[RMDB]
The record gives the reactivity of an RNA of 177 nucleotides to 2A3. Source: RMDB library RFM100, as collected in RNAgym.
RNA sequence: GGGAACGACUCGAGUAGAGUCGAAAAACGCUGUACGCAGCGAACAGGAAGAGGAGGAAGCCCUGGAGGGGCUGGAGGUGAUGGAUGUUUUCCUCCGGUUCUCAGGGCUCCACCUCUUUCGAGCCAAAUUAUCGGACGUCUUCGGACGUCCGAUAAUAAAAGAAACAACAACAACAAC
Reactivity to 2A3 in 0.01 (KOAc 150mM, MgCl2 10mM, bicine 150mM(pH8.5), 24C), signal-to-noise 2, nucleotides 027 to 126: a010c020g000c030u000g010u070a050c230g000c070a000g000c000g040a080a000c010a090g020g020a010a010g000a000g000g000a010g000g010a110a010g000c010c010c010u110g080g300a170g000g000g000g000c000u000g010g000a000g000g070u140g040a040u070g070g300a130u170g250u120u120u100u050c010c000u000c010c000g000g000u030u010c130u010c000a000g000g050g000c000u000c000c000a000c000c000u000c010u000u000u020c000g020a000g020c000c000a060a270
Background:
2A3 adducts were read by reverse transcription with SuperScript II with manganese. For 2A3, 606 sequencing reads were counted.